The record gives the reactivity of an RNA of 177 nucleotides to DMS and 2A3. For DMS, 1,019 sequencing reads were counted.
RNA sequence: GGGAACGACUCGAGUAGAGUCGAAAACACUAUUGGUUCGCCAAUAGUGAAACGGCAAGCCGAAGCCGAACGGCAAGCCGAAGCCGAACGGCAACGGGAAAAAAACUGCGUUCUUCGGAACGCAGAAUCUAUGUUCUCGGUUCGCCGAGAACAUAGAAAAAGAAACAACAACAACAAC
Reactivity to DMS in 0.01 (KOAc 150mM, MgCl2 10mM, bicine 150mM(pH8.5), 24C), signal-to-noise 2, nucleotides 027 to 126: c000a010c000u000a000u010u000g000g000u000u020c300g000c000c000a000a050u000a010g040u000g040a020a050a130c130g010g000c090a040a210g030c010c000g010a050a300g000c010c010g030a040a250c000g000g000c000a020a290g020c100c140g000a110a030g010c020c010g000a030a240c050g000g020c000a040a230c030g000g030g000a000a000a030a060a060a020a140c000u000g000c020g050u000u010c000u000u010c170g040g000a020a000c000g000c000a000g000a010a010
Reactivity to 2A3 in 0.01 (KOAc 150mM, MgCl2 10mM, bicine 150mM(pH8.5), 24C), signal-to-noise 1, nucleotides 027 to 126: c000a000c000u010a000u000u000g040g000u030u040c160g060c080c000a000a000u000a000g010u010g030a040a010a000c050g120g000c070a050a050g180c000c000g010a010a010g030c030c030g000a010a000c000g000g000c040a040a020g120c020c040g000a010a020g030c020c000g010a020a000c000g000g010c000a010a000c000g030g080g140a050a060a000a000a010a010a060c010u000g000c010g030u000u000c000u060u020c200g090g000a010a000c010g000c000a010g000a000a010